[RMDB]
RNA sequence: GGGAACGACUCGAGUAGAGUCGAAAAGUUGGAGCGGACUGCCCAUCAUUUCGAUGUCGUCGGGCCACCCCAUCGGCAUCUACGGCAAAAUCGGCGUCGAGGACGGCAGAAAGAACGUUGUCCUCAGGUAGCGUAGUACGUUCGCGUACUACGCUACAAAAGAAACAACAACAACAAC
Reactivity to DMS in 0.01 (KOAc 150mM, MgCl2 10mM, bicine 150mM(pH8.5), 24C), signal-to-noise 2, nucleotides 027 to 126: g010u000u000g010g000a150g050c060g030g010a160c100u040g010c010c010c020a030u000c050a110u000u000u010c030g020a070u000g030u000c020g010u000c030g010g000g020c060c050a100c160c020c030c020a040u000c010g000g000c040a030u020c030u000a030c090g010g000c030a040a060a130a080u000c030g000g030c080g000u010c120g020a000g010g000a050c000g000g010c020a140g000a100a070a120g000a130a120c180g000u000u000g010u000c000c000u000c030a080g040
Reactivity to 2A3 in 0.01 (KOAc 150mM, MgCl2 10mM, bicine 150mM(pH8.5), 24C), signal-to-noise 2, nucleotides 027 to 126: g050u050u080g040g020a140g000c030g070g160a170c100u210g010c000c000c000a020u000c030a050u000u130u090c080g010a050u030g090u140c020g030u030c060g040g000g030c100c010a050c030c000c000c020a020u050c010g020g000c010a040u050c050u040a010c030g040g000c010a050a020a030a110u120c060g070g000c020g110u150c090g010a000g000g010a000c000g010g010c080a010g210a100a170a030g130a120a030c050g000u030u020g000u020c000c040u010c000a010g050